Chemical mapping of a 207-nucleotide RNA with DMS and 2A3. The reactions ran in a buffer of 150 mM KOAc, 10 mM MgCl2 and 150 mM bicine (pH 8.5), at 24 C. The DMS profile rests on 6,036 reads. For DMS the reverse transcriptase was MarathonRT.
RNA sequence: GGGAACGACUCGAGUAGAGUCGAAAAGAGCUUUUGUCCGGAAUGGUUCCGCCGUGAUCGGGCCAAGCAAUAGUUGCCAACGACAACUAUGCUCCGGUUGCUCAGGCAGCGUAACGCUGCUUGAAAGAUGACGGCAAUCGCUUCGGCGAUUGCCGAACAAGAGAUAGUAGUUCGCUACUAUCUCUUGAAAAGAAACAACAACAACAAC
Reactivity to DMS in 0.01 (KOAc 150mM, MgCl2 10mM, bicine 150mM(pH8.5), 24C), signal-to-noise 2, nucleotides 027 to 156: g000a110g040c040u000u000u000u000g000u000c010c020g000g010a050a070u000g000g020u000u010c080c060g030c050c050g040u000g020a130u000c030g010g020g000c020c100a100a050g000c050a070a070u000a020g010u000u010g030c000c020a170a200c210g010a050c000a020a010c000u000a020u010g000c060u000c040c060g010g040u000u000g000c020u000c000a030g010g020c010a010g010c000g010u000a140a170c130g020c000u000g000c000u000u010g000a120a110a180g000a120u000g010a210c020g020g010c000a000a010u000c000g030c020u000u000c240g000g000c000g000a010u000u000g010c000c000g020a000a040
Reactivity to 2A3 in 0.01 (KOAc 150mM, MgCl2 10mM, bicine 150mM(pH8.5), 24C), signal-to-noise 4, nucleotides 027 to 156: g030a000g040c030u130u160u180u240g080u090c020c000g000g050a110a130u090g040g000u250u240c020c050g020c070c100g140u170g050a150u080c020g000g000g000c000c000a020a000g000c020a080a240u000a010g010u000u010g020c070c050a140a060c140g110a110c000a000a000c020u010a010u010g000c010u000c030c000g000g000u030u070g020c010u000c030a010g020g000c000a010g000c000g080u170a090a060c220g000c000u000g000c000u000u030g040a020a040a010g100a040u150g070a030c020g010g000c000a000a000u000c000g000c000u080u080c290g030g000c000g000a000u010u000g000c000c000g000a010a000